[RMDB]
RNA sequence: GGGAACGACUCGAGUAGAGUCGAAAAAGGUAGCCGCCAUUGAGGGAGAGUUUAAGCUGAGGACAGAGCAAAGGAAGACCUUCGUGGAACUCAUGAAGAGAGGAGACCUUCCCGUCUGGCUAGCCUAGCUUCAAGCUCGCUUCGGCGAGCUUGAAGCAAAAGAAACAACAACAACAAC
Reactivity to 2A3 in 0.01 (KOAc 150mM, MgCl2 10mM, bicine 150mM(pH8.5), 24C), signal-to-noise 1, nucleotides 027 to 126: a000g020g000u030a000g000c000c010g010c030c000a010u040u290g000a030g000g020g000a090g000a040g090u000u190u250a100a020g000c000u000g070a080g000g000a060c040a090g130a000g070c040a050a190a000g000g000a150a000g040a080c000c000u000u000c000g010u020g020g010a040a010c010u000c020a030u170g140a130a040g220a060g010a010g030g120a010g030a000c000c000u000u000c000c000c000g000u060c000u050g010g000c000u000a000g090c010c000u010a020
Structure probing data (2A3) for a 177-nucleotide construct. Source: RMDB library OK1LIB, as collected in RNAgym. For 2A3 the reverse transcriptase was SuperScript II with manganese. Conditions: 150 mM KOAc, 10 mM MgCl2 and 150 mM bicine (pH 8.5), 24 C.